The record gives the reactivity of an RNA of 207 nucleotides to 2A3.
2A3 adducts were read by reverse transcription with SuperScript II with manganese.
For 2A3, 436 sequencing reads were counted.
RNA sequence: GGGAACGACUCGAGUAGAGUCGAAAACGAGUGCAAUAAAGACGCGGUUGCCGAUCGGUAUGGAUGCCACCGUGACAGCUCAAUCACACAAGUGCCAACGAUAACGAGGCGCUCGCUAUUGCUGCGUAAAAGCGACGAUCGUUCGCGAUCGUCGCAACUCUUCUCCCCUCUUCGGAGGGGAGAAGAGAAAAGAAACAACAACAACAAC
Reactivity to 2A3 in 0.01 (KOAc 150mM, MgCl2 10mM, bicine 150mM(pH8.5), 24C), signal-to-noise 1, nucleotides 027 to 156: c050g020a060g050u090g030c130a060a110u080a100a300a000g160a000c040g020c070g060g000u030u140g010c010c050g020a050u050c010g030g160u230a150u150g080g050a040u090g050c050c020a020c000c020g000u000g030a020c010a000g080c020u020c110a030a050u120c050a040c000a020c000a130a060g000u000g050c020c000a110a130c060g110a110u110a200a030c070g050a150g000g000c000g000c000u050c020g080c000u050a030u080u130g010c030u050g020c010g010u060a000a000a020a190g020c000g000a000c000g000a010u000c010g020u020u050c250g000c000g090a000u000c000g000u010c000g010c000a000a000